[RMDB]
RNA sequence: GGGAACGACUCGAGUAGAGUCGAAAAGUGGCACAGUUCGCUGUGCCACAAAGGACUACCCGUCAGGGUUAAGGCGAUACGGACAGCCGGGUCCACUGCCGAAAAUCCGUAGCUUCGGCUACGGAAACAAUGUUAGGUACUUCGGUACCUAACAUUGAAAAGAAACAACAACAACAAC
Reactivity to 2A3 in 0.01 (KOAc 150mM, MgCl2 10mM, bicine 150mM(pH8.5), 24C), signal-to-noise 4, nucleotides 027 to 126: g010u000g000g000c000a000c000a000g000u050u080c170g050c120u000g000u000g000c000c000a000c000a000a000a000g010g000a010c010u040a020c010c010c010g080u160c190a130g040g030g000u060u190a160a110g010g010c020g010a040u070a150c030g050g030a020c050a010g020c020c000g000g010g000u000c010c010a020c050u050g000c000c010g090a110a020a010a040u010c000c000g000u010a010g000c000u020u050c200g100g000c010u000a000c000g000g000a000a000a000
Reactivity to DMS in 0.01 (KOAc 150mM, MgCl2 10mM, bicine 150mM(pH8.5), 24C), signal-to-noise 5, nucleotides 027 to 126: g010u000g000g010c010a010c000a020g030u000u010c210g030c000u000g020u000g010c000c000a010c000a010a060a090g000g000a030c020u000a040c010c000c010g010u000c220a140g000g000g010u000u010a040a050g010g020c000g010a080u000a110c040g000g000a040c030a300g010c010c000g000g000g000u000c000c010a110c070u010g020c010c000g000a210a040a080a130u000c000c000g000u000a010g000c000u000u000c140g020g010c000u000a010c000g000g000a020a030a090
Structure probing data (2A3 and DMS) for a 177-nucleotide construct. The reactions ran in a buffer of 150 mM KOAc, 10 mM MgCl2 and 150 mM bicine (pH 8.5), at 24 C. The 2A3 profile rests on 8,256 reads.